The record gives the reactivity of an RNA of 177 nucleotides to DMS and 2A3. For DMS the reverse transcriptase was MarathonRT. It was measured as part of the RMDB library OK2TRN. As a SHAPE reagent, 2A3 marks flexible, mostly unpaired nucleotides at the ribose 2'-OH. The reactions ran in a buffer of 150 mM KOAc, 10 mM MgCl2 and 150 mM bicine (pH 8.5), at 24 C.
[RMDB]
RNA sequence: GGGAACGACUCGAGUAGAGUCGAAAAUGCGCGGAUUGAUCGGGCGACGAAAAGAUGAGUGCUGGCGCGGCCUGCGGCGCACGGGAGAACACAGGGACCACCCCGGUUCCAUAGUCAACGUCAGCGGGAAACCCUACUUGUUCGCAAGUAGGGUUUCAAAAGAAACAACAACAACAAC
Reactivity to DMS in 0.01 (KOAc 150mM, MgCl2 10mM, bicine 150mM(pH8.5), 24C), signal-to-noise 2, nucleotides 027 to 126: u020g030c040g030c020g030g010a140u010u020g020a080u000c060g000g000g020c050g020a080c050g010a040a070a080a060g020a070u000g000a120g020u020g010c000u000g020g000c050g030c200g010g010c040c000u010g000c040g010g000c050g020c000a070c080g020g020g020a100g020a030a110c080a050c070a080g020g000g010a060c070c070a150c090c010c030c040g000g020u010u010c020c010a040u000a050g000u000c080a060a020c070g010u000c050a030g000c060g010g010
Reactivity to 2A3 in 0.01 (KOAc 150mM, MgCl2 10mM, bicine 150mM(pH8.5), 24C), signal-to-noise 1, nucleotides 027 to 126: u100g000c020g020c000g100g090a100u150u110g020a030u110c030g020g010g060c060g010a140c070g170a040a030a030a030g110a080u220g040a040g090u070g040c030u000g000g000c060g000c000g040g020c020c030u040g000c000g040g000c010g070c020a060c000g000g020g010a130g020a050a030c070a020c050a170g060g000g010a010c000c010a050c040c010c000c000g000g000u020u010c000c000a030u080a060g040u040c030a040a000c020g020u010c010a000g000c000g000g080